[RMDB]
RNA sequence: GGGAACGACUCGAGUAGAGUCGAAAAGCCCGUCUGAAUGACGUGCAUGAAGCGGUGACCGCUGUUGCUGAACAUGUGCAGGAAAAACUGAGCGCCACUGAGCAGCGCCUCGCUGAGAUGGAAACCGCCUUUUCUGCACUUAAGCAGGAGGUGACUGCACAGCGCGUAGAUUCGUCUACGCGCUGUGAAAAGAAACAACAACAACAAC
Reactivity to DMS in 0.01 (KOAc 150mM, MgCl2 10mM, bicine 150mM(pH8.5), 24C), signal-to-noise 1, nucleotides 027 to 156: g010c000c020c000g000u030c030u010g000a110a110u000g010a060c030g090u010g060c020a120u000g030a010a120g030c060g030g010u000g000a080c050c000g040c030u000g020u000u000g010c000u010g000a130a160c110a160u000g010u000g010c020a070g000g030a040a030a040a080a150c100u000g000a060g010c070g010c050c020a180c020u000g010a130g060c040a110g040c050g020c090c050u000c090g020c010u010g010a130g000a090u000g010g000a090a070a070c070c040g030c000c030u000u000u000u000c030u000g020c000a050c050u000u000a080a210g030c000a130g030g000a070g060g020u000g000a150c070u000g010
Reactivity to 2A3 in 0.01 (KOAc 150mM, MgCl2 10mM, bicine 150mM(pH8.5), 24C), signal-to-noise 1, nucleotides 027 to 156: g030c020c000c020g020u030c080u110g300a290a140u110g010a040c010g010u040g020c070a100u150g120a000a040g040c040g010g070u040g110a030c000c040g000c030u050g090u230u070g030c030u060g060a110a060c150a160u150g000u000g000c000a000g050g060a040a010a010a030a000c120u120g010a030g020c000g010c000c030a010c020u070g050a020g000c040a020g010c000g040c040c020u000c000g000c050u070g010a090g030a200u070g030g040a040a080a020c020c020g020c030c020u000u000u000u000c020u010g010c010a000c000u030u040a040a020g040c000a000g040g000a010g080g000u000g030a040c010u040g000
Structure probing data (DMS and 2A3) for a 207-nucleotide construct. The 2A3 profile rests on 789 reads. Conditions: 150 mM KOAc, 10 mM MgCl2 and 150 mM bicine (pH 8.5), 24 C.